[RMDB]
About this RNA: This 177-nucleotide RNA was probed chemically with DMS and 2A3. The RNA was probed in 150 mM KOAc, 10 mM MgCl2 and 150 mM bicine (pH 8.5) at 24 C.
RNA sequence: GGGAACGACUCGAGUAGAGUCGAAAAAGCUUGAAGCAAUGGUGGGGCAAGCUGCAGAUAUUCGUUCGGGCGCGGCGAGCAGGAGCGACGGCCUCAAUGGAACGGCUGCCGCCAUCCUGCCGUUCAACGAGCAUUAGCUAUUCGUAGCUAAUGCUCGAAAAGAAACAACAACAACAAC
Reactivity to DMS in 0.01 (KOAc 150mM, MgCl2 10mM, bicine 150mM(pH8.5), 24C), signal-to-noise 3, nucleotides 027 to 126: a030g000c010u000u000g020a110a110g010c090a080a080u000g000g030u000g010g010g020g010c050a050a040g020c030u010g030c110a060g000a090u010a070u030u000c050g000u010u000c080g020g010g020c060g000c130g000g010c020g000a140g020c000a010g000g000a140g020c010g000a020c010g010g010c010c000u000c110a140a080u010g020g010a070a110c210g010g000c000u000g010c000c020g000c020c090a090u010c020c000u010g010c010c010g010u000u000c080a060a180
Reactivity to 2A3 in 0.01 (KOAc 150mM, MgCl2 10mM, bicine 150mM(pH8.5), 24C), signal-to-noise 2, nucleotides 027 to 126: a000g030c030u050u040g050a070a020g060c060a000a170u100g050g050u060g030g010g020g000c010a040a010g010c040u060g000c050a020g020a060u080a080u110u120c050g030u000u020c030g020g000g000c050g000c050g080g000c010g000a060g000c010a010g000g030a010g000c000g000a020c020g000g000c000c000u080c060a100a260u220g110g010a110a070c070g000g000c000u000g000c000c020g030c000c000a060u040c000c020u000g000c020c000g000u040u080c020a020a030
Values cover nucleotides 27 to 126. The data come from the RNA Mapping Database (RMDB), library OK2TST.